[RMDB]
RNA sequence: GGGAACGACUCGAGUAGAGUCGAAAAUCCUCACGUUUCGACGUGAGGAGAACUCUAGCAAGGGAAGGGAACCCUCGGGAAGGGCUCCCAAGGCGAUGUCAACAAGGGCCAAAUUCGUUUGGCCCAACUAAUUUGAGGUGUUCGCACCUCAAAUUAGAAAAGAAACAACAACAACAAC
Reactivity to 2A3 in 0.01 (KOAc 150mM, MgCl2 10mM, bicine 150mM(pH8.5), 24C), signal-to-noise 2, nucleotides 027 to 126: u000c000c000u010c000a000c000g010u020u070u110c270g140a010c020g010u000g000a000g010g020a000g000a040a020c020u020c070u120a060g040c050a100a080g100g030g050a100a090g070g000g020a040a050c000c040c000u030c060g130g070g050a050a000g010g000g020c010u010c010c000c010a000a000g020g020c010g070a080u130g140u260c040a040a040c040a100a250g020g000g020c000c000a000a000a030u120u080c200g060u010u000u000g000g000c000c000c000a000a000
Reactivity to DMS in 0.01 (KOAc 150mM, MgCl2 10mM, bicine 150mM(pH8.5), 24C), signal-to-noise 3, nucleotides 027 to 126: u000c000c000u000c000a010c000g010u000u000u010c140g020a020c000g010u000g000a000g010g010a000g010a080a140c040u000c010u020a100g020c080a100a100g000g000g010a140a190g000g000g010a030a040c010c000c000u000c070g010g000g020a210a070g010g010g000c020u000c010c000c000a040a050g010g010c030g000a090u000g010u000c080a060a060c130a070a110g020g010g000c000c000a000a000a040u000u010c210g010u000u000u000g000g000c000c000c010a000a020